Description
Source: RMDB library M2PK90, as collected in RNAgym. This 177-nucleotide RNA was probed chemically with DMS. In probing experiments dimethyl sulfate is read out at A N1 and C N3, which are open when not base-paired. The RNA was probed in 150 mM KOAc, 10 mM MgCl2 and 150 mM bicine (pH 8.5) at 24 C. The DMS profile rests on 889 reads.

RNA sequence: GGGAACGACUCGAGUAGAGUCGAAAAUUAAAGGAGGAGGAGGAGUGUGUGUCUUCCCAGCUGCUGAGUAGAACCUCCGCUCACACGCGAAAGCUACGAGCAGCAGCAGUGCGGAAACGGUGAAAAAGCACUGUUUGAGUUUCGACUCAAACAGUGCAAAAGAAACAACAACAACAAC
Reactivity to DMS in 0.01 (KOAc 150mM, MgCl2 10mM, bicine 150mM(pH8.5), 24C), signal-to-noise 2, nucleotides 027 to 126: u000u000a040a060a090g010g010a070g040g020a120g010g020a040g010g000a100g000u000g000u000g010u000g010u020c060u000u000c030c030c030a140g040c010u000g000c000u000g000a050g000u010a020g010a080a090c060c040u000c100c010g010c050u000c180a100c230a100c250g000c000g000a040a220a090g010c000u020a010c040g010a110g000c020a020g040c000a030g010c010a060g020u010g030c090g020g000a040a020a050c070g020g020u010g010a030a020a040a090a110